[RMDB]
RNA sequence: GGGAACGACUCGAGUAGAGUCGAAAAGGUGUGUAUCGCACGGUUCGAUCAGUGGGAGAAGGCUCAGGUCGAUUGCUCUAUUGGUUUGGGCUGUGUCCUGGUUGCGCGCUGAGGGUAUAACCAUUGGCUAAAUAUUUUAAUUCGUUAAAAUAUUUAGAAAAGAAACAACAACAACAAC
Reactivity to 2A3 in 0.01 (KOAc 150mM, MgCl2 10mM, bicine 150mM(pH8.5), 24C), signal-to-noise 6, nucleotides 027 to 126: g060g010u040g000u010g010u060a030u110c030g010c030a020c030g010g030u060u050c020g010a080u030c020a020g050u080g020g050g010a060g010a140a050g040g000c010u010c030a010g020g030u010c000g030a070u020u100g030c030u030c020u070a030u040u040g040g020u030u060u080g000g000g000c010u020g040u010g020u050c000c020u030g020g000u080u050g020c030g000c010g000c020u020g030a070g030g010g020u060a050u030a080a000c000c000a050u050u090g030g000
Reactivity to DMS in 0.01 (KOAc 150mM, MgCl2 10mM, bicine 150mM(pH8.5), 24C), signal-to-noise 7, nucleotides 027 to 126: g010g010u000g000u010g010u010a040u010c050g000c030a080c070g010g020u000u010c030g000a070u010c050a090g020u010g000g000g000a060g010a140a120g010g010c020u010c050a040g010g010u010c020g000a040u020u020g010c090u040c110u010a070u010u010g000g000u000u010u010g010g000g000c010u010g000u030g000u010c020c020u000g000g010u010u000g020c060g010c050g010c030u000g000a080g000g000g020u010a060u020a090a100c040c030a110u020u010g000g010